The record gives the reactivity of an RNA of 177 nucleotides to DMS.
Conditions: 150 mM KOAc, 10 mM MgCl2 and 150 mM bicine (pH 8.5), 24 C.
RNA sequence: GGGAACGACUCGAGUAGAGUCGAAAAGAUAUGGAUCCCACGGGAGGACUUUGGUCGGAAACGACCAACUGUCCGAAGAACGUGGGAGUCCUAAGUCAAAACACACCAGACUUCGGUCUGGUGUGAACCACUUCCCUACGUUCGCGUAGGGAAGUGGAAAAGAAACAACAACAACAAC
Reactivity to DMS in 0.01 (KOAc 150mM, MgCl2 10mM, bicine 150mM(pH8.5), 24C), signal-to-noise 1, nucleotides 027 to 126: g000a050u000a020u020g000g000a260u000c000c000c000a030c020g000g000g030a000g000g040a010c010u010u000u000g020g010u000c020g060g000a000a000a050c000g000a020c000c000a000a010c300u000g000u010c000c000g000a110a110g000a150a130c000g020u000g000g000g000a010g000u000c010c000u000a030a060g000u010c000a100a060a060a270c000a020c000a000c000c000a000g010a010c000u000u000c180g020g010u000c000u000g000g010u000g000u000g010a010a050

DMS adducts were read by reverse transcription with MarathonRT. The data come from the RNA Mapping Database (RMDB), library TTRDEL.